[RMDB]
RNA sequence: GGGAACGACUCGAGUAGAGUCGAAAAGUUCGGAUGGAAAUGUGUUGACCUGGUUGGGGAAAUGAGGUCGAAGAAUCUGUUGUUUGUGCAUUGAUAUUUUCCCUCGAAUUGGACGAGCACGUGUAGAGGAAACAUAGAACUUCGGUUCUAUGUUUCCAAAAGAAACAACAACAACAAC
Reactivity to 2A3 in 0.01 (KOAc 150mM, MgCl2 10mM, bicine 150mM(pH8.5), 24C), signal-to-noise 3, nucleotides 027 to 126: g110u110u090c080g010g010a030u090g030g060a020a030a070u140g070u020g070u150u110g050a060c020c000u070g130g030u120u120g000g030g020g050a000a060a040u180g030a060g000g080u000c040g000a030a090g030a050a110u040c030u020g040u040u030g020u040u130u160g030u040g020c020a030u100u060g070a040u070a120u120u040u010u050c010c030c000u020c030g050a080a150u070u050g090g000a020c030g020a030g000c050a000c030g050u060g020u050a070g020a070
Reactivity to DMS in 0.01 (KOAc 150mM, MgCl2 10mM, bicine 150mM(pH8.5), 24C), signal-to-noise 2, nucleotides 027 to 126: g020u010u000c060g000g030a080u020g010g000a050a080a050u050g000u000g030u000u010g000a090c090c040u010g010g020u010u020g030g030g030g000a060a080a060u040g000a070g000g020u000c020g020a060a130g000a080a060u030c090u000g030u040u010g020u000u030u010g020u000g030c030a050u000u010g010a080u020a050u010u010u000u000c000c000c000u000c060g000a080a070u010u030g010g000a090c040g000a070g000c020a090c060g020u020g000u000a040g010a300

Conditions: 150 mM KOAc, 10 mM MgCl2 and 150 mM bicine (pH 8.5), 24 C. An RNA of 177 nucleotides, treated with 2A3 and DMS and read out base by base. High DMS reactivity at an A or C suggests that its Watson-Crick edge is free. For DMS, 4,219 sequencing reads were counted.